[RMDB]
RNA sequence: GGGAACGACUCGAGUAGAGUCGAAAAGUUCAUUGUUGCAGAUUGUCUGAUGUUGACUUUCAGAAGUGAACUGAAAUGUAUGAGAAAUCUGGAAAUAUGGUAAAGACAAGGAAUCAAAGCCAAGAAGCAAACAGACACGCAGGGGAGGAUAUUUACAAUUUACUGCAGGUUUCGACCUGCAGUAAAUAAAAGAAACAACAACAACAAC
Reactivity to DMS in 0.01 (KOAc 150mM, MgCl2 10mM, bicine 150mM(pH8.5), 24C), signal-to-noise 2, nucleotides 027 to 156: g010u010u000c050a110u020u010g030u000u000g000c010a180g040a210u000u010g020u000c020u010g020a080u000g020u000u010g000a120c110u030u030u000c040a100g000a090a070g020u010g030a110a090c060u020g000a080a060a080u000g000u000a060u000g020a010g010a040a050a070u010c030u000g030g030a060a070a090u000a050u010g020g000u000a040a080a120g000a030c050a000a060g000g000a060a120u000c080a020a070a110g010c040c030a020a080g010a080a060g070c050a080a100a080c040a050g020a110c060a050c110g030c050a080g000g040g020g000a050g030g010a090u000a020u000u010u000a080c090a100
Reactivity to 2A3 in 0.01 (KOAc 150mM, MgCl2 10mM, bicine 150mM(pH8.5), 24C), signal-to-noise 1, nucleotides 027 to 156: g060u070u080c030a050u000u210g050u140u110g060c010a010g020a120u070u000g090u090c030u050g110a120u130g150u130u180g010a040c000u010u090u010c050a060g000a040a040g080u160g060a100a090c010u010g010a020a000a070u150g050u090a050u090g010a000g020a000a050a050u010c040u010g030g120a000a100a060u240a080u100g060g000u060a170a100a000g000a060c020a090a050g030g020a010a010u140c070a070a050a000g040c030c000a000a140g020a070a000g000c000a000a080a000c010a000g020a000c000a010c020g020c030a000g050g020g000g000a020g030g020a030u050a110u100u110u010a070c080a060